[RMDB]
RNA sequence: GGGAACGACUCGAGUAGAGUCGAAAAUGGUCAGGACCCGGGCCGGACACCAGGGAUCCGCAACCGCUGGGCAAGCUGACGCGCGACUUGGCGAAAAAGCGCGGGUGGUCCGGUCACGUCGCGGAAGGCACCCCAGUAAUUUCGAUUACUGGGGUGCAAAAGAAACAACAACAACAAC
Reactivity to 2A3 in 0.01 (KOAc 150mM, MgCl2 10mM, bicine 150mM(pH8.5), 24C), signal-to-noise 2, nucleotides 027 to 126: u070g030g090u060c020a020g050g080a130c000c000c000g000g000g000c000c000g040g000a120c060a050c000c010a000g060g150g000a170u110c080c020g070c030a000a020c080c010g020c060u050g000g050g050c060a020a150g030c010u040g060a080c000g030c000g020c010g070a140c030u050u140g040g030c070g040a060a070a080a090a000g050c070g000c070g020g000g050u050g030g060u020c000c000g000g040u010c020a000c020g090u030c060g010c010g020g020a070a050g050
Reactivity to DMS in 0.01 (KOAc 150mM, MgCl2 10mM, bicine 150mM(pH8.5), 24C), signal-to-noise 1, nucleotides 027 to 126: u040g010g010u000c020a020g010g010a170c040c010c020g030g000g000c000c000g000g000a010c030a050c080c040a120g010g010g000a070u030c110c040g000c050a080a270c060c020g000c090u010g020g000g000c120a100a300g020c010u010g010a160c230g000c000g000c300g010a010c040u010u000g000g000c000g000a070a040a100a070a110g000c070g000c040g000g000g010u000g020g010u000c000c020g060g000u000c000a000c130g030u050c000g000c040g010g000a190a090g030
Chemical mapping of a 177-nucleotide RNA with 2A3 and DMS. The reactions ran in a buffer of 150 mM KOAc, 10 mM MgCl2 and 150 mM bicine (pH 8.5), at 24 C. The data come from the RNA Mapping Database (RMDB), library OK1LIB. The DMS profile rests on 1,287 reads. In probing experiments dimethyl sulfate is read out at A N1 and C N3, which are open when not base-paired. DMS adducts were read by reverse transcription with MarathonRT.